[RMDB]
RNA sequence: GGGAACGACUCGAGUAGAGUCGAAAAGAGGAUACGAAGAGCUUCGUGCUUUCGAUAGCUUUGUAGCGGCGGCUACGUACCCUAGGGGAGCCGCCUCCCCUGCUAUCGGCGCGAGGGGAGUAUCCGAAAUAGCACCCACGUUCGCGUGGGUGCUAUUAAAAGAAACAACAACAACAAC
Reactivity to DMS in 0.01 (KOAc 150mM, MgCl2 10mM, bicine 150mM(pH8.5), 24C), signal-to-noise 1, nucleotides 027 to 126: g000a190g000g020a010u000a000c000g000a120a200g020a220g000c000u000u000c010g000u000g010c010u000u010u000c050g020a030u000a010g000c020u000u000u010g050u020a040g040c180g020g020c050g010g040c000u000a070c120g000u010a160c050c040c030u000a140g020g000g030g000a050g010c000c030g000c020c000u000c010c020c030c020u000g030c020u000a000u000c000g010g000c040g000c000g000a000g000g010g000g010a070g020u000a000u010c000c020g000a090
The data come from the RNA Mapping Database (RMDB), library OK2TRN. Chemical mapping of a 177-nucleotide RNA with DMS. Values cover nucleotides 27 to 126. The RNA was probed in 150 mM KOAc, 10 mM MgCl2 and 150 mM bicine (pH 8.5) at 24 C.